[RMDB]
RNA sequence: GGGAACGACUCGAGUAGAGUCGAAAAACAUCACCAUCAUCAUCCUGACUAGUCUUUCGGGAGGAUACGCCUCACUCUGGAAGACAACCAAAAACUCUUCCAGUGUUUGAUAAAAUAAAGAAUUCAACUUUAUUAGGGGCUUCGGCCCCUAAUAAAGAAAAGAAACAACAACAACAAC
Reactivity to DMS in 0.01 (KOAc 150mM, MgCl2 10mM, bicine 150mM(pH8.5), 24C), signal-to-noise 1, nucleotides 027 to 126: a030c180a070u000c070a100c010c060a030u000c060a090u000c000a050u000c080c020u020g000a000c010u000a070g040u000c110u000u040u000c010g000g000g000a070g000g000a020u000a000c060g000c070c050u000c040a100c020u000c000u000g000g120a070a000g000a000c100a100a170c250c210a000a080a000a250a120c140u000c000u000u020c000c010a040g030u000g000u060u000u000g000a120u070a020a050a070a050u000a010a040a180g000a000a120u000u000c020a090a100
Reactivity to 2A3 in 0.01 (KOAc 150mM, MgCl2 10mM, bicine 150mM(pH8.5), 24C), signal-to-noise 2, nucleotides 027 to 126: a000c020a120u110c020a050c060c020a070u090c010a030u050c020a010u040c010c000u010g010a000c040u070a110g050u160c180u070u090u060c050g020g010g000a000g010g000a050u090a080c040g070c050c000u030c000a010c030u030c000u020g000g000a030a000g000a030c040a010a110c080c050a030a020a020a020a020c020u010c000u000u000c010c000a000g010u000g000u000u000u090g160a170u260a000a000a080a060u240a020a100a010g050a020a080u140u000c040a060a110